[RMDB]
Chemical mapping of a 177-nucleotide RNA with 2A3 and DMS. For DMS the reverse transcriptase was MarathonRT. Conditions: 150 mM KOAc, 10 mM MgCl2 and 150 mM bicine (pH 8.5), 24 C. For DMS, 1,941 sequencing reads were counted. Source: RMDB library TTRDES, as collected in RNAgym. 2A3 adducts were read by reverse transcription with SuperScript II with manganese. Reactivities are given for positions 27 through 126.

RNA sequence: GGGAACGACUCGAGUAGAGUCGAAAAGAUAUGGAUUAUCCUAGACAUGCGUCGUGUCGGAAACGACACCAGACGCAACAGCUAGAGAUAAUCCUAAGUCAAAUCGAUAUACUUCGGUAUAUCGAAAGAGCUUAGUAUUCUUCGGAAUACUAAGCUCAAAAGAAACAACAACAACAAC
Reactivity to 2A3 in 0.01 (KOAc 150mM, MgCl2 10mM, bicine 150mM(pH8.5), 24C), signal-to-noise 2, nucleotides 027 to 126: g010a020u040a020u110g010g000a010u010u000a000u000c000c000u010a020g060a100c180a250u240g000c000g010u000c000g000u020g000u000c000g030g020a020a020a030c000g000a000c000a020c010c070a090g030a000c010g040c030a050a020c060a030g050c000u010a000g000a040g000a060u010a000a000u000c000c000u000a030a000g020u010c030a030a010a260u060c010g010a000u000a000u000a030c000u020u090c280g120g000u000a000u010a010u000c000g020a020a040a000
Reactivity to DMS in 0.01 (KOAc 150mM, MgCl2 10mM, bicine 150mM(pH8.5), 24C), signal-to-noise 2, nucleotides 027 to 126: g000a000u010a180u000g000g000a000u030u000a000u000c010c000u000a020g010a060c100a160u010g020c000g000u000c010g000u000g010u000c000g030g000a040a040a030c030g020a020c010a000c050c300a060g030a040c000g000c000a020a020c240a150g010c000u000a000g010a180g000a000u000a030a000u000c000c000u000a000a080g000u000c030a070a140a120u000c000g020a020u000a010u000a000c000u010u010c270g010g000u000a000u000a000u000c010g000a030a080a160